Chemical mapping of a 207-nucleotide RNA with 2A3 and DMS. The reactions ran in a buffer of 150 mM KOAc, 10 mM MgCl2 and 150 mM bicine (pH 8.5), at 24 C. It was measured as part of the RMDB library OK3TST. For 2A3, 1,708 sequencing reads were counted. For DMS, 8,011 sequencing reads were counted. For DMS the reverse transcriptase was MarathonRT.
[RMDB]
RNA sequence: GGGAACGACUCGAGUAGAGUCGAAAAUGUCUGAAAGGUCACAUAUCUCUGUCUCUCUAGGAUUCUUUACUGGUGCUUUAUUUAGUUCCUUUGAUGAGGUUUUGUUUUCCUGGAUGGUCUUGAUGCUUGUGGACAUUCAUCGGGUCUGGGCAUUGAACAGACCUGUAGUUUUCGAACUACAGGUCUGAAAAGAAACAACAACAACAAC
Reactivity to 2A3 in 0.01 (KOAc 150mM, MgCl2 10mM, bicine 150mM(pH8.5), 24C), signal-to-noise 3, nucleotides 027 to 156: u060g020u010c020u030g060a090a080a060g030g010u060c010a020c010a100u130a090u030c020u010c030u070g070u020c010u010c010u030c040u100a030g050g020a110u170u050c020u040u140u120a100c070u060g020g010u020g020c000u140u130u050a100u100u230u070a070g010u040u050c000c000u070u070u130g060a070u060g040a060g060g000u050u070u110u100g040u010u080u050u000c000c010u020g020g040a060u010g000g040u030c020u030u050g020a020u050g030c040u080u080g070u070g050g010a000c010a090u070u050c020a040u170c050g080g020g020u000c000u030g020g000g040c030a060u020u070g010a040a020
Reactivity to DMS in 0.01 (KOAc 150mM, MgCl2 10mM, bicine 150mM(pH8.5), 24C), signal-to-noise 2, nucleotides 027 to 156: u000g000u010c030u010g010a050a050a120g010g020u000c020a080c040a110u010a080u010c010u010c040u010g010u010c020u010c050u000c030u010a130g010g000a100u000u000c030u000u000u000a080c050u000g030g030u000g030c040u010u000u000a040u020u000u000a090g010u000u000c010c020u010u000u010g000a110u000g000a070g010g040u000u000u000u000g000u000u010u000u010c030c010u010g010g010a090u000g000g010u010c020u000u000g010a060u000g010c020u000u000g030u010g020g000a080c040a080u010u000c040a100u010c050g010g010g010u000c030u000g010g020g010c010a080u000u000g010a090a250